[RMDB]
Structure probing data (DMS) for a 177-nucleotide construct. For DMS the reverse transcriptase was MarathonRT. It was measured as part of the RMDB library OK2TST. High DMS reactivity at an A or C suggests that its Watson-Crick edge is free.
RNA sequence: GGGAACGACUCGAGUAGAGUCGAAAAUUCUGUAACCCUUUUAUCUUCAUAAAUAUAUGCUUUUUGUAGCAGCUUUUAAAGUAUUUGCAUGGGGUAGAGAGGUGAGGAUGCACCUUUCUGUGCAAUAAUUCGUGAUCUUUUUCGAAAGAUCACGAAUAAAAGAAACAACAACAACAAC
Reactivity to DMS in 0.01 (KOAc 150mM, MgCl2 10mM, bicine 150mM(pH8.5), 24C), signal-to-noise 1, nucleotides 027 to 126: u010u000c030u000g010u000a300a100c000c010c010u000u000u020u000a010u000c000u010u050c010a000u010a050a020a030u020a020u010a120u000g010c010u000u000u040u010u050g000u020a050g050c010a060g000c240u000u000u020u030a050a130a170g010u010a010u000u000u010g020c190a030u010g000g010g000g010u000a000g010a020g010a040g010g010u000g010a250g020g000a080u020g010c000a030c010c060u000u000u000c050u000g000u000g000c020a080a120u020a100